RNA sequence: GGGAACGACUCGAGUAGAGUCGAAAAGAUAUGGAGCAUGAUGAACUACAGCGACGUGUCGGAAACGACACCAAGCUGCAUCCGCUGCUCCUAAGUCAAAACCAGAAAGGCUUCGGCCUUUCUGGAACUUCCGUAGAUCGUUCGCGAUCUACGGAAGAAAAGAAACAACAACAACAAC
Reactivity to DMS in 0.01 (KOAc 150mM, MgCl2 10mM, bicine 150mM(pH8.5), 24C), signal-to-noise 1, nucleotides 027 to 126: g000a000u000a300u000g000g000a000g000c000a000u020g000a070u000g000a060a040c010u010a300c040a010g010c010g010a300c300g000u020g030u000c000g000g000a090a070a240c000g020a000c000a010c000c060a000a300g010c000u000g000c010a000u010c000c000g000c050u000g000c000u000c000c000u010a010a120g000u000c020a080a040a160a170c060c000a010g000a000a010a000g000g090c000u000u010c300g060g000c000c000u000u000u000c000u010g000g040a050a040
Reactivity to 2A3 in 0.01 (KOAc 150mM, MgCl2 10mM, bicine 150mM(pH8.5), 24C), signal-to-noise 1, nucleotides 027 to 126: g000a020u100a040u110g000g010a020g000c000a030u200g020a030u050g020a090a240c110u300a110c300a010g010c040g010a070c040g030u000g000u030c000g000g080a070a040a100c030g000a010c000a010c030c000a000a050g000c000u030g010c000a000u020c030c000g000c010u000g000c000u000c010c000u010a120a010g000u010c020a000a010a130a210c050c000a000g000a010a020a000g070g000c110u230u300c300g170g000c000c000u000u020u000c000u020g000g010a010a000